[RMDB]
RNA sequence: GGGAACGACUCGAGUAGAGUCGAAAAUCAUCACAAAAUGUCUCAUAGUAGAAUCAUUUGGCAUGUGAGGUCGAAGGUCACAGACUGUGCAGCCCUAGAUCCACUCUGAAACACAGUAACCUACAGCGAUAGUAACUCGUUUCGACGAGUUAUUGUCAAAAGAAACAACAACAACAAC
Reactivity to DMS in 0.01 (KOAc 150mM, MgCl2 10mM, bicine 150mM(pH8.5), 24C), signal-to-noise 9, nucleotides 027 to 126: u010c070a080u010c070a070c090a060a050a100a070u000g010u000c020u000c020a090u010a090g010u010a050g010a070a070u000c040a060u000u000u000g010g010c120a060u000g010u000g010a100g010g010u000c030g010a120a210g010g010u000c060a050c070a120g010a080c120u000g010u000g010c110a080g010c010c010c040u000a180g000a040u000c020c030a040c040u000c040u000g000a060a040a060c070a040c080a060g010u010a060a080c060c020u000a060c150a080g010c200
Reactivity to 2A3 in 0.01 (KOAc 150mM, MgCl2 10mM, bicine 150mM(pH8.5), 24C), signal-to-noise 9, nucleotides 027 to 126: u040c010a000u050c010a000c020a030a130a010a050u060g040u000c010u010c040a180u160a080g130u070a020g060a080a060u090c040a070u040u030u060g030g000c050a040u090g020u020g030a100g020g010u010c020g020a040a010g030g010u050c020a010c010a050g210a170c140u070g020u030g010c010a030g040c000c000c000u000a010g000a010u000c000c000a010c010u020c020u030g060a030a040a010c060a000c010a060g030u040a040a060c020c010u060a060c060a030g060c030

Conditions: 150 mM KOAc, 10 mM MgCl2 and 150 mM bicine (pH 8.5), 24 C.
Chemical mapping of a 177-nucleotide RNA with DMS and 2A3.
For DMS the reverse transcriptase was MarathonRT.
It was measured as part of the RMDB library OK2TRN.
2A3 adducts were read by reverse transcription with SuperScript II with manganese.